[RMDB]
RNA sequence: GGGAACGACUCGAGUAGAGUCGAAAACCUGGUAUUCGUACCAGGGAAACUGGGGUCGCAGGUGGGACAUGGCUACACCUGAAGCCUCCACGGGUGCGGCCAACAGCCGUAACAUCCUGCGACGGAGGCACCCGUUAACGACGUCUUCGGACGUCAAUAUCCUUAUGACCUUCGGGUCAUAAGGAUAAAAAGAAACAACAACAACAAC
Reactivity to 2A3 in 0.01 (KOAc 150mM, MgCl2 10mM, bicine 150mM(pH8.5), 24C), signal-to-noise 1, nucleotides 027 to 156: c000c000u000g020g000u030a050u100u160c260g000u100a010c000c000a020g000g000g030a090a000a060c050u120g160g000g090g000u030c020g000c000a000g000g010u050g030g000g020a080c090a220u090g000g000c020u000a000c000a020c010c000u000g000a010a000g000c000c000u000c000c010a000c020g000g000g020u010g070c050g000g060c050c060a020a070c060a020g060c020c100g000u020a000a000c010a050u250c000c010u000g000c040g020a000c020g000g000a000g000g000c000a030c000c000c000g080u080u090a120a070c130g000a000c000g000u000c000u020u150c170g050g000a000c010g000u000c000a000a000

Structure probing data (2A3) for a 207-nucleotide construct. Reactivities are given for positions 27 through 156. Source: RMDB library RNAMAK, as collected in RNAgym.